An RNA of 177 nucleotides, treated with 2A3 and DMS and read out base by base.

RNA sequence: GGGAACGACUCGAGUAGAGUCGAAAAUACAGUACUAAUGCAAAUACUGUAUUUUUCUAUAUAGUGCGCAAUAUGUAGGAAUUUGCAGUUAGAUUAGACAGUAUGGGAAGUACACAUGCUGUUUAAUGUCUAGAUAUGCUUUCGAGCAUAUCUAGACAAAAGAAACAACAACAACAAC
Reactivity to 2A3 in 0.01 (KOAc 150mM, MgCl2 10mM, bicine 150mM(pH8.5), 24C), signal-to-noise 5, nucleotides 027 to 126: u090a010c040a000g050u040a020c060u170a070a160u170g110c020a030a040a130u070a040c000u000g000u000a000u010u010u000u010u010c000u010a020u000a000u010a050g160u110g100c080g020c070a050a060u010a000u070g010u000a000g020g020a030a030u000u030u040g000c010a000g010u040u080a060g020a100u010u010a010g010a010c000a000g000u010a000u000g010g000g060a160a040g160u120a070c110a000c000a050u000g010c010u020g020u000u000u020a020a050u040
Reactivity to DMS in 0.01 (KOAc 150mM, MgCl2 10mM, bicine 150mM(pH8.5), 24C), signal-to-noise 2, nucleotides 027 to 126: u020a050c040a070g010u020a130c110u010a100a050u010g010c080a070a070a130u030a010c000u000g000u020a000u000u000u000u000u020c000u020a000u010a010u000a030g020u000g000c080g000c100a090a070u030a020u000g000u000a010g000g000a050a040u000u000u000g010c010a050g010u010u030a030g020a120u000u000a000g000a010c010a010g010u000a000u000g010g000g010a150a130g000u020a160c140a070c080a010u000g020c010u000g010u000u000u000a020a010u040

The RNA was probed in 150 mM KOAc, 10 mM MgCl2 and 150 mM bicine (pH 8.5) at 24 C. For 2A3 the reverse transcriptase was SuperScript II with manganese.